[RMDB]
RNA sequence: GGGAACGACUCGAGUAGAGUCGAAAAUCAACAUAAAGUCUAUAAUGUACUUACAGGAUAAAGACCACAAGCUUCCUAAUGGCGCAAUUCGCGUACGUGCUGCGCCAGUAAAGUUAAGUUCUAAGGUUGUACUUUCUCAACCUUUUGCUGACAUGUAAAUUAGAGCCGAAUUCGUUCGGCUCUAAUUAAAAGAAACAACAACAACAAC
Reactivity to 2A3 in 0.01 (KOAc 150mM, MgCl2 10mM, bicine 150mM(pH8.5), 24C), signal-to-noise 3, nucleotides 027 to 156: u060c000a000a080c030a070u210a120a050a010g030u040c100u040a130u090a240a120u130g030u070a040c050u140u110a050c040a050g000g040a060u080a190a180a050g030a050c010c030a060c060a090a020g050c050u020u000c020c000u040a110a120u010g000g000c000g000c010a020a070u220u160c060g030c030g090u120a100c100g070u110g040c010u000g000c000g000c020c000a000g020u020a000a080a000g010u060u090a040a020g030u150u050c030u140a030a010g000g000u000u000g040u060a110c110u160u230u080c100u000c030a010a000c000c000u000u030u040u060g020c010u020g020a020c000a130u240g080u180a000
Reactivity to DMS in 0.01 (KOAc 150mM, MgCl2 10mM, bicine 150mM(pH8.5), 24C), signal-to-noise 2, nucleotides 027 to 156: u000c040a070a120c030a200u010a040a090a120g010u010c030u010a080u010a060a130u000g010u000a090c070u010u000a130c070a250g030g000a150u010a070a110a110g010a130c040c030a120c050a050a130g010c020u000u000c050c040u000a070a120u010g020g030c000g020c000a080a110u000u000c070g000c060g030u000a070c070g040u000g010c080u010g010c020g000c020c010a020g010u000a020a080a050g010u000u000a040a070g020u000u000c070u010a040a060g020g050u000u000g000u000a040c180u010u000u000c110u020c030a020a020c010c010u010u000u000u010g020c010u000g000a100c090a070u000g020u000a040

An RNA of 207 nucleotides, treated with 2A3 and DMS and read out base by base. The DMS profile rests on 4,253 reads. The data come from the RNA Mapping Database (RMDB), library OK3TST.